[RMDB]
RNA sequence: GGGAACGACUCGAGUAGAGUCGAAAAGAAAGAAAGAAAGAAAGGUAUGAAGUCCUAUUCACUCCAGAUAGGAUAAACUUCAUAUUGAUCGUGUAUGUGCUAACGCACAUACACGAAUGCGCAUGCAGAACUGCAUGCAUGAACAUAUGGAGUGCAACUAUGACGGUGAGUUCGCUCACCGUCAUAGAAAAGAAACAACAACAACAAC
Reactivity to 2A3 in 0.01 (KOAc 150mM, MgCl2 10mM, bicine 150mM(pH8.5), 24C), signal-to-noise 2, nucleotides 027 to 156: g050a000a070a010g060a040a010a000g070a100a080a010g030a100a130a030g000g010u000a000u010g010a000a000g000u040c000c000u000a000u060u030c020a000c050u000c010c000a010g000a010u000a000g030g000a020u090a010a100a000c000u000u030c000a030u010a020u030u120g000a040u010c000g000u000g010u020a000u000g020u000g010c060u190a200a030c160g000c010a000c000a000u000a000c000a010c000g000a000a010u040g000c060g000c000a000u000g000c000a020g030a300a040c120u050g010c010a000u000g020c000a010u100g070a030a040c100a110u180a050u130g000g000a020g000u030g020c020a040a090